[RMDB]
RNA sequence: GGGAACGACUCGAGUAGAGUCGAAAAGAGGGGACCGUCCUCCUCGGUAAUGGCGAAUGGGACCCCAGAUUUCCUUCCUAUUGAGAAGGAAAUAACUGGCACUCCCUUAGCCAUCCGAGUGGACGUUGAGCGCAUAACUUCGGUUAUGCGAAAAGAAACAACAACAACAAC
Reactivity to 2A3 in 0.01 (KOAc 150mM, MgCl2 10mM, bicine 150mM(pH8.5), 24C), signal-to-noise 9, nucleotides 027 to 129: g090a020g000g020g010g020a020c020c000g000u000c010c000u050c080c010u000c010g000g010u090a100a040u010g000g000c010g030a050a040u050g000g010g000a020c100c090c000c000a000g010a020u000u000u000c000c000u000u010c050c020u240a300u300u300g120a300g010a040a010g020g050a000a000a000u080a060a060c010u000g000g000c040a030c030u010c010c000c000u000u040a000g000c000c000a010u000c000c000g000a000g000u020g000g000a000c000g000u020u030g050a050g030
Reactivity to DMS in 0.01 (KOAc 150mM, MgCl2 10mM, bicine 150mM(pH8.5), 24C), signal-to-noise 9, nucleotides 027 to 129: g040a040g020g010g000g010a200c100c020g000u000c000c000u010c300c000u010c000g040g000u030a030a010u020g010g000c000g010a140a050u010g010g000g010a030c170c300c010c010a020g000a080u000u000u000c000c010u000u000c030c000u040a150u110u110g030a200g020a030a000g020g040a000a000a000u010a060a070c010u020g020g020c110a150c180u010c000c010c000u010u010a200g010c010c000a010u020c020c000g000a010g000u020g010g000a020c020g010u030u040g000a110g010